[RMDB]
RNA sequence: GGGAACGACUCGAGUAGAGUCGAAAAGAUUCAGCGCGGAUCGCCUGUUGGGCCUUAUCCACAUGAAGCCACUGUUUUCCGCCCCACCCCCCGACGCCAGCUUUCCGCUGAGCCUCAUGUCCACCGAGAAUUGACAGUUGUUCGCAACUGUCAAUUCAAAAGAAACAACAACAACAAC
Reactivity to DMS in 0.01 (KOAc 150mM, MgCl2 10mM, bicine 150mM(pH8.5), 24C), signal-to-noise 2, nucleotides 027 to 126: g000a160u000u010c010a050g030c110g000c040g000g000a020u000c270g020c030c040u000g010u000u010g020g020g010c050c040u000u010a050u000c020c110a070c040a060u010g010a040a090g000c050c040a100c040u010g000u000u010u000u000c040c010g040c040c000c010c010a210c060c000c020c010c020c020g020a030c150g000c040c020a040g000c030u000u000u010c090c060g010c010u000g000a090g020c000c030u010c070a080u000g000u000c040c060a090c080c060g020a130
The record gives the reactivity of an RNA of 177 nucleotides to DMS.
Reactivities are given for positions 27 through 126.
Conditions: 150 mM KOAc, 10 mM MgCl2 and 150 mM bicine (pH 8.5), 24 C.
It was measured as part of the RMDB library OK2TST.